[RMDB]
RNA sequence: GGGAACGACUCGAGUAGAGUCGAAAAUCACGCCAGUUCGCUGGCGUGAAAAGGUCAAGACAUAAGUCUAAAGCCAAAAGGGAAAACCCAGACCAAUGGCAAAAAGCGGUACCUUCGGGUACCGCAACCUUGGGUUAAUGUUCGCAUUAACCCAAGGAAAAGAAACAACAACAACAAC
Reactivity to DMS in 0.01 (KOAc 150mM, MgCl2 10mM, bicine 150mM(pH8.5), 24C), signal-to-noise 2, nucleotides 027 to 126: u010c010a000c000g000c020c010a010g010u010u000c150g040c010u010g000g010c000g000u020g000a020a040a120a070g000g030u010c210a150a040g000a040c040a170u020a090a080g010u020c010u000a080a210a200g010c010c000a000a040a160a180g000g000g000a050a050a100a120c000c010c000a060g000a130c000c000a050a290u000g000g010c020a070a090a070a130a110g000c020g000g020u000a000c020c010u000u010c270g050g000g030u000a010c010c000g020c000a000a000
Reactivity to 2A3 in 0.01 (KOAc 150mM, MgCl2 10mM, bicine 150mM(pH8.5), 24C), signal-to-noise 2, nucleotides 027 to 126: u010c020a020c010g000c020c000a000g010u050u040c180g060c120u020g000g000c000g000u000g000a000a000a000a000g050g050u160c060a050a000g010a020c000a120u300a230a110g000u000c010u050a190a000a000g000c010c010a010a000a060a030g000g010g010a060a130a020a070c030c000c000a010g050a020c020c000a030a030u030g010g000c000a070a010a050a050a000g010c010g020g000u030a010c000c010u040u110c210g050g010g000u000a000c010c000g000c010a000a000
Chemical mapping of a 177-nucleotide RNA with DMS and 2A3. The reactions ran in a buffer of 150 mM KOAc, 10 mM MgCl2 and 150 mM bicine (pH 8.5), at 24 C. For DMS, 993 sequencing reads were counted. DMS adducts were read by reverse transcription with MarathonRT. The data come from the RNA Mapping Database (RMDB), library M2PK50. As a SHAPE reagent, 2A3 marks flexible, mostly unpaired nucleotides at the ribose 2'-OH. The 2A3 profile rests on 2,020 reads.